[RMDB]
RNA sequence: GGGAACGACUCGAGUAGAGUCGAAAAUAUACAGCAGAAAGCCCCAGGCGAUUUUUUUAUCAAUCAACCAGGGGCUCUACUGUAAUGCCUAGACAACAUUAUAGUAGCCCGAUAACCGCCGUAAGGCAUGCUUCCAUUAGUUCGCUAAUGGAAGCAUAAAAGAAACAACAACAACAAC
Reactivity to DMS in 0.01 (KOAc 150mM, MgCl2 10mM, bicine 150mM(pH8.5), 24C), signal-to-noise 2, nucleotides 027 to 126: u050a090u050a100c060a100g010c060a180g020a140a210a090g000c000c010c000c000a060g000g010c300g000a000u000u000u000u020u040u030u020a080u020c130a040a010u000c090a050a110c050c020a110g010g000g000g020c000u010c000u000a000c000u010g020u010a010a030u000g010c020c000u020a220g000a090c300a130a120c030a020u010u030a010u010a020g040u010a010g010c030c000c020g000a060u020a050a050c220c060g000c010c000g010u030a140a070g010g040c020
Reactivity to 2A3 in 0.01 (KOAc 150mM, MgCl2 10mM, bicine 150mM(pH8.5), 24C), signal-to-noise 4, nucleotides 027 to 126: u200a010u060a040c050a050g090c020a030g110a110a090a010g000c000c000c000c000a010g010g000c010g000a010u020u020u010u030u030u250u240a160u290c060a030a010u000c010a010a110c000c020a040g000g010g010g000c000u000c000u000a000c000u010g000u000a000a000u010g010c000c010u030a060g040a200c040a050a000c010a030u000u030a010u020a040g010u010a010g050c000c000c010g020a070u110a150a080c030c080g020c010c000g050u070a090a020g010g000c010